[RMDB]
RNA sequence: GGGAACGACUCGAGUAGAGUCGAAAACGCGCUGGUGGAAGGCGUGCUACCCUGGAACUACUACCUGAGCUGCCGCCGUGGCGAGACCAAGAGCCACGCUCUCUACUGGGAACGGCUGGCGAACGCGUUCCUCUCGCACAUCGCACGCUUCGUAAAGGGAGCUCAAAUAUUUCGAUAUUUGAGCUCCAAAAGAAACAACAACAACAAC
Reactivity to 2A3 in 0.01 (KOAc 150mM, MgCl2 10mM, bicine 150mM(pH8.5), 24C), signal-to-noise 1, nucleotides 027 to 156: c000g010c000g010c010u030g000g160u080g130g030a070a060g000g000c000g020u070g000c020u080a130c040c000c000u040g040g100a080a050c040u120a070c000u050a080c050c080u030g040a020g000c010u000g050c040c040g000c020c030g010u020g040g000c060g050a040g030a090c020c110a120a070g020a000g070c000c040a050c050g000c010u040c000u040c000u110a230c100u090g000g000g080a040a020c000g080g000c120u010g080g030c000g000a070a000c050g010c000g040u050u030c000c030u030c000u010c020g050c020a110c000a120u120c060g000c010a030c100g030c000u110u170c060g000u050a050a030a110g000
The data come from the RNA Mapping Database (RMDB), library OK3TST. Structure probing data (2A3) for a 207-nucleotide construct. The reactions ran in a buffer of 150 mM KOAc, 10 mM MgCl2 and 150 mM bicine (pH 8.5), at 24 C.